[RMDB]
RNA sequence: GGGAACGACUCGAGUAGAGUCGAAAACAGAACAAUAACACUAGAAAAUGACUACACUGGGGAGGAUGAUGGAUAUGAUCUCAUCGAGCCAGAGGUCACUACUAGGACAGAGGUGACUGUGAGGGCGACUCCUCGUUAGUUUCGACUAACGAGGAGUAAAAGAAACAACAACAACAAC
Reactivity to DMS in 0.01 (KOAc 150mM, MgCl2 10mM, bicine 150mM(pH8.5), 24C), signal-to-noise 4, nucleotides 027 to 126: c060a070g000a200a100c100a040a100u000a090a110c150a140c040u030a010g000a070a060a140a170u000g000a030c010u000a070c300a040c020u000g000g000g000g010a170g010g000a020u010g020a030u010g020g010a070u020a080u010g020a070u000c070u000c010a010u000c020g000a300g010c010c010a020g000a100g010g010u010c000a000c040u010a240c010u000a060g010g000a140c170a060g010a160g010g020u000g000a080c030u020g000u000g010a120g000g010g000c070g010
Reactivity to 2A3 in 0.01 (KOAc 150mM, MgCl2 10mM, bicine 150mM(pH8.5), 24C), signal-to-noise 3, nucleotides 027 to 126: c030a030g080a080a030c040a040a100u170a130a010c040a020c080u020a010g050a030a060a020a020u020g010a020c000u080a040c080a000c080u030g000g010g010g030a030g220g000a010u030g000a000u110g050g040a040u120a130u300g110a100u080c010u000c020a020u010c020g000a020g000c010c000a030g000a000g070g000u000c010a000c010u070a000c000u010a000g030g090a010c020a050g080a050g080g020u040g030a060c010u030g040u040g080a070g000g010g090c020g040
This 177-nucleotide RNA was probed chemically with DMS and 2A3. 2A3 adducts were read by reverse transcription with SuperScript II with manganese. The data come from the RNA Mapping Database (RMDB), library OK2TRN. The reactions ran in a buffer of 150 mM KOAc, 10 mM MgCl2 and 150 mM bicine (pH 8.5), at 24 C.